Chemical mapping of a 207-nucleotide RNA with 2A3 and DMS. DMS adducts were read by reverse transcription with MarathonRT. The reactions ran in a buffer of 150 mM KOAc, 10 mM MgCl2 and 150 mM bicine (pH 8.5), at 24 C. DMS (dimethyl sulfate) methylates the pairing face of unpaired adenines and cytosines.
[RMDB]
RNA sequence: GGGAACGACUCGAGUAGAGUCGAAAACGGAUUCGACAGGGAUGGAUCGAGCUUGAGCUGCGAGCCGAGAGGCGAUCUCGUAAACACGCACUUAAAUAUAACUGGCAAAACUAACAGUUUUAACCAAAACGUAGCAUUAGCUGCCUAAUAAGCGCAGGUUUUAUGUUAGGUUCGCCUAACAUAAAACAAAAGAAACAACAACAACAAC
Reactivity to 2A3 in 0.01 (KOAc 150mM, MgCl2 10mM, bicine 150mM(pH8.5), 24C), signal-to-noise 5, nucleotides 027 to 156: c030g050g020a090u070u040c020g040a030c050a070g040g020g010a020u070g030g020a020u070c060g020a020g040c000u050u060g030a030g010c040u030g030c030g040a030g040c050c000g030a040g000a000g040g020c040g060a190u010c010u000c020g160u150a030a050a030c030a010c050g020c010a050c050u120u130a050a110a010u170a040u030a080a040c030u020g050g000c030a030a030a090a070c040u070a050a040c010a020g000u010u010u010u080a030a050c040c010a060a010a000a040c050g040u050a010g020c010a020u040u030a010g020c020u030g020c000c010u080a140a100u120a150a020g020c040g000c050a010g010
Reactivity to DMS in 0.01 (KOAc 150mM, MgCl2 10mM, bicine 150mM(pH8.5), 24C), signal-to-noise 2, nucleotides 027 to 156: c060g010g000a120u000u000c000g010a130c000a080g020g000g050a220u000g020g000a060u010c040g010a100g020c060u010u010g000a080g030c060u000g020c040g000a230g040c100c010g040a200g040a040g020g010c060g040a150u000c060u000c020g060u000a130a090a070c060a120c040g020c010a060c030u010u000a030a070a080u010a140u010a040a140c060u020g030g020c050a090a070a100a070c090u000a080a010c040a100g010u010u000u000u000a020a080c150c100a020a030a060a040c050g030u000a050g000c050a110u010u020a130g030c030u010g000c000c020u010a080a110u010a040a080g000c040g010c010a150g020